An RNA of 207 nucleotides, treated with DMS and 2A3 and read out base by base. Reactivities are rounded to 0.1 and cut off at 0 and 3. The 2A3 profile rests on 2,372 reads. 2A3 adducts were read by reverse transcription with SuperScript II with manganese. Conditions: 150 mM KOAc, 10 mM MgCl2 and 150 mM bicine (pH 8.5), 24 C. 2A3 is a SHAPE reagent: it acylates the 2'-hydroxyl of flexible nucleotides of all four kinds. Source: RMDB library RNAMAK, as collected in RNAgym.

RNA sequence: GGGAACGACUCGAGUAGAGUCGAAAACCGUAGGUCGGUCACCAAAGCUUGGAUUUAUACACGAUGUAUGUUCGAAAGAGCAUACUAAGUGUAUUGUCAGCUUUGCAAGUCCGACCUAAACGGAAAAGAACUUCCGAAGUUCGCUUCGGAAGUUCAAACUCCUAUAAGGGUUCGCCCUUAUAGGAGUAAAAGAAACAACAACAACAAC
Reactivity to DMS in 0.01 (KOAc 150mM, MgCl2 10mM, bicine 150mM(pH8.5), 24C), signal-to-noise 1, nucleotides 027 to 156: c000c000g020u000a030g010g010u000c000g000g000u000c020a300c160c000a010a010a010g010c000u000u020g040g060a100u000u010u000a010u000a030c000a030c000g000a300u000g010u000a010u010g030u000u000c000g000a090a160a300g010a060g040c010a000u000a000c010u000a100a300g020u010g010u010a020u000u000g000u000c000a090g000c010u000u030u000g000c020a020a080g030u000c000c000g010a030c010c000u000a000a000a050c010g000g020a100a050a110a150g000a020a030c000u000u000c020c000g000a030a000g040u000u010c300g030c030u000u000c000g000g000a030a020g000u000u010c010a030a150
Reactivity to 2A3 in 0.01 (KOAc 150mM, MgCl2 10mM, bicine 150mM(pH8.5), 24C), signal-to-noise 3, nucleotides 027 to 156: c000c000g010u000a020g000g010u000c010g010g010u020c010a030c120c000a020a000a010g030c030u210u260g140g000a080u300u300u090a020u040a000c020a000c020g000a010u140g000u000a000u010g010u010u010c000g020a110a100a090g010a050g010c000a010u000a000c000u000a050a000g000u000g000u000a000u000u000g000u000c000a000g000c010u010u000u000g000c010a250a300g020u000c000c000g000a000c000c000u000a000a000a000c010g040g010a020a050a100a270g010a000a010c000u000u000c010c000g000a000a000g000u040u080c130g030c230u010u000c000g000g010a000a000g000u000u000c000a000a010